[RMDB]
RNA sequence: GGGAACGACUCGAGUAGAGUCGAAAAAAAAAGAUAUGGAUCAUUGCCCAGCGCACACGUUUGACGUCAGCUCGGAAACGAGCUGACCGAGUGUGACCCGCUGCUCCAAUGAUCCUAAGUCAAAAAACAUUUUAUGCAUGUUCGCAUGCAUAAAAUGAAAAGAAACAACAACAACAAC
Reactivity to DMS in 0.01 (KOAc 150mM, MgCl2 10mM, bicine 150mM(pH8.5), 24C), signal-to-noise 3, nucleotides 027 to 126: a000a060a120a120a100g010a040u000a130u010g010g000a010u000c000a010u010u000g000c300c240c010a010g000c000g000c010a010c020a010c010g030u000u010u010g030a180c300g020u000c000a010g000c000u020c000g010g000a080a030a050c000g000a040g010c000u000g000a010c000c020g000a060g020u000g000u000g000a170c300c280c170g000c000u000g010c030u000c020c010a020a020u010g010a010u000c000c010u000a000a050g000u010c020a010a060a080a070a060a070

The record gives the reactivity of an RNA of 177 nucleotides to DMS. For DMS, 2,191 sequencing reads were counted. It was measured as part of the RMDB library TTRDES.